[RMDB]
This 177-nucleotide RNA was probed chemically with DMS and 2A3.
2A3 adducts were read by reverse transcription with SuperScript II with manganese.
Conditions: 150 mM KOAc, 10 mM MgCl2 and 150 mM bicine (pH 8.5), 24 C.
RNA sequence: GGGAACGACUCGAGUAGAGUCGAAAAGAGAGAAAUACCGCGCGAAAACAGAGAAAGGACUGUAAGGACGCGAAAUCCUUUCCGUCAUUUACCGCAAGAAAGAGCGAUGUGUGACGAAUAGAGAGAGCCAUUACUCCGCAUUCGUGCGGAGUAAUGGAAAAGAAACAACAACAACAAC
Reactivity to DMS in 0.01 (KOAc 150mM, MgCl2 10mM, bicine 150mM(pH8.5), 24C), signal-to-noise 2, nucleotides 027 to 126: g040a060g000a100g000a100a050a110u050a110c010c000g000c060g000c010g050a120a030a130a010c010a020g030a190g000a110a040a060g030g020a050c000u000g000u020a050a040g000g020a040c060g000c030g000a000a110a100u000c030c000u000u000u000c000c000g000u000c000a000u000u050u040a090c080c010g000c030a060a020g000a090a150a080g040a120g020c020g010a020u030g000u030g000u000g010a000c110g000a150a010u010a050g010a100g040a020g030a080g000
Reactivity to 2A3 in 0.01 (KOAc 150mM, MgCl2 10mM, bicine 150mM(pH8.5), 24C), signal-to-noise 3, nucleotides 027 to 126: g090a000g020a000g010a020a120a030u140a190c080c000g000c000g000c040g140a080a030a010a020c000a020g020a000g020a050a040a030g010g020a010c000u020g000u060a100a070g060g010a050c040g020c040g060a020a010a070u010c000c000u010u000u000c010c000g000u000c010a000u040u060u070a080c000c000g000c030a090a000g140a230a170a010g150a040g020c040g010a030u050g060u000g000u000g020a020c020g010a040a010u160a010g060a000g010a010g010a010g040

Background: The 2A3 profile rests on 2,134 reads. High 2A3 reactivity points to a flexible backbone, as in loops and unpaired stretches.